The record gives the reactivity of an RNA of 177 nucleotides to DMS and 2A3. Conditions: 150 mM KOAc, 10 mM MgCl2 and 150 mM bicine (pH 8.5), 24 C. Source: RMDB library OK1LIB, as collected in RNAgym. The 2A3 profile rests on 2,489 reads.

[RMDB]
RNA sequence: GGGAACGACUCGAGUAGAGUCGAAAAGGCGGUAAAGCCAUAUCCGGAAAAAGGAAUUAGCGAAAUGCAAGCAAGCACGGGGCGACGCCAACCGCAACGCCGUAGAACCAGAAUAUGGGAAUUAGGACCAUAAUGACUCCUUCGGGAGUCAUUAUGGAAAAGAAACAACAACAACAAC
Reactivity to DMS in 0.01 (KOAc 150mM, MgCl2 10mM, bicine 150mM(pH8.5), 24C), signal-to-noise 3, nucleotides 027 to 126: g000g040c010g000g030u030a060a070a140g010c000c030a080u020a040u000c030c000g000g010a070a070a080a160a080g000g000a020a100u000u030a110g060c010g000a080a040a130u000g020c020a120a100g000c110a070a100g000c040a020c030g000g030g010g030c040g000a090c190g010c010c020a110a080c040c050g000c040a100a060c060g000c020c000g000u000a020g000a110a140c000c000a080g000a100a040u030a010u040g030g000g010a100a070u050u000a090g010g010a300
Reactivity to 2A3 in 0.01 (KOAc 150mM, MgCl2 10mM, bicine 150mM(pH8.5), 24C), signal-to-noise 3, nucleotides 027 to 126: g070g000c070g090g110u140a110a050a000g030c000c000a030u020a030u050c000c000g010g020a130a040a000a040a000g190g010a050a080u110u060a050g010c020g020a100a100a050u080g030c070a050a020g020c000a000a100g000c000a010c020g020g000g000g010c030g010a040c010g000c010c010a030a010c020c000g100c010a050a000c010g040c010c000g020u050a040g000a090a020c010c000a000g060a080a070u190a060u120g040g050g050a030a020u110u060a140g000g090a010